[RMDB]
RNA sequence: GGGAACGACUCGAGUAGAGUCGAAAAUAUAUCAUGCUCAGUAAUGGAUAUUCUGAAUAUAAUGGUUCUCAGGGAACUAAUCCACAUAUGAUAAACGGCAAACCAAAAACAUUUGCUAUCGUUACUAAAAACUUACUUCUUUCGAGAAGUAAGUUUUAAAAGAAACAACAACAACAAC
Reactivity to 2A3 in 0.01 (KOAc 150mM, MgCl2 10mM, bicine 150mM(pH8.5), 24C), signal-to-noise 2, nucleotides 027 to 126: u080a010u000a020u040c030a040u050g030c040u020c120a020g030u150a100a040u060g050g020a040u060a050u200u000c050u020g050a060a000u230a040u070a120a190u100g020g000u030u000c010u030c080a070g160g020g010a030a030c020u060a130a030u000c030c000a040c030a080u140a040u130g030a070u120a100a100a010c040g030g000c000a000a020a030c040c040a080a060a030a090a030c030a020u030u030u010g000c000u030a040u190c050g050u040u030a030c000u030a100
Reactivity to DMS in 0.01 (KOAc 150mM, MgCl2 10mM, bicine 150mM(pH8.5), 24C), signal-to-noise 4, nucleotides 027 to 126: u000a100u000a040u010c030a040u000g020c110u000c100a060g010u000a060a040u000g000g010a080u000a090u000u010c050u010g000a090a090u010a070u000a100a100u000g010g010u000u000c010u000c150a120g020g000g010a020a050c060u000a080a050u000c030c020a040c150a080u010a040u000g020a060u000a040a060a080c160g010g000c010a010a020a060c100c100a060a090a070a070a070c230a150u000u000u000g010c010u010a060u010c070g000u000u000a060c080u000a050